[RMDB]
RNA sequence: GGGAACGACUCGAGUAGAGUCGAAAACAUGCCAACACUCAUAGCAAUAACAGCACUGCUAAACCUCUAUUUCUACAUACGACUAGCCUACUCCUCCUCACUGACUAUGUUCCCAUCCACCAACAACAUAAAAAUAAAAUGACAAUUCGAACACACACUUUUUAACUCGCUUCGGCGAGUUAAAAAGAAAAGAAACAACAACAACAAC
Reactivity to 2A3 in 0.01 (KOAc 150mM, MgCl2 10mM, bicine 150mM(pH8.5), 24C), signal-to-noise 2, nucleotides 027 to 156: c060a060u130g050c030c010a100a000c030a070c040u080c050a060u060a060g000c010a020a080u100a200a050c030a080g050c060a030c080u060g000c010u040a070a090a000c020c050u050c020u070a070u050u070u000c050u100a090c020a060u100a020c050g030a030c030u010a040g030c000c000u010a020c020u020c000c000u000c040c010u020c010a050c020u010g020a010c010u040a050u300g000u030u000c000c000c000a020u040c010c000a040c040c000a010a180c010a060a030c030a120u240a040a100a040a010a050u280a110a050a050a040u130g030a040c020a060a050u160u070c040g010a220a010c000a000c000a000c000a040